[RMDB]
RNA sequence: GGGAACGACUCGAGUAGAGUCGAAAACUCUGAUAAAAGUCUUCGGGAUCCGUUUUGACAUCCUGGUUUUUGGCACCGUAAGUCUCGUUUCCCAGCUCCGGGCACCGGCAUCCUAUGACUGUGUCCUAAUUACUGCUGUGGGGCCUCCAUGGAGGGACCUCGUAUAGUGAUUCGUCACUAUACGAGGAAAAGAAACAACAACAACAAC
Reactivity to 2A3 in 0.01 (KOAc 150mM, MgCl2 10mM, bicine 150mM(pH8.5), 24C), signal-to-noise 1, nucleotides 027 to 156: c040u040c030u110g100a050u180a240a190a140a090g050u020c000u100u080c050g070g060g030a100u020c080c000g050u150u080u070u270g020a010c020a020u010c020c050u040g000g050u040u010u000u030u060g060g000c010a010c010c000g040u040a040a040g020u010c020u010c080g030u010u030u080c000c000c030a040g010c000u090c040c080g000g000g000c000a010c020c060g000g000c010a000u080c030c140u300a150u160g060a090c020u040g030u020g040u070c010c000u050a130a100u090u150a070c060u110g050c040u070g000u060g020g060g020g090c000c070u100c020c030a100u110g120g000a020g070g000g070a030

Background: The record gives the reactivity of an RNA of 207 nucleotides to 2A3. The RNA was probed in 150 mM KOAc, 10 mM MgCl2 and 150 mM bicine (pH 8.5) at 24 C. 2A3 is a SHAPE reagent: it acylates the 2'-hydroxyl of flexible nucleotides of all four kinds. For 2A3 the reverse transcriptase was SuperScript II with manganese. For 2A3, 522 sequencing reads were counted. The data come from the RNA Mapping Database (RMDB), library OK3TST.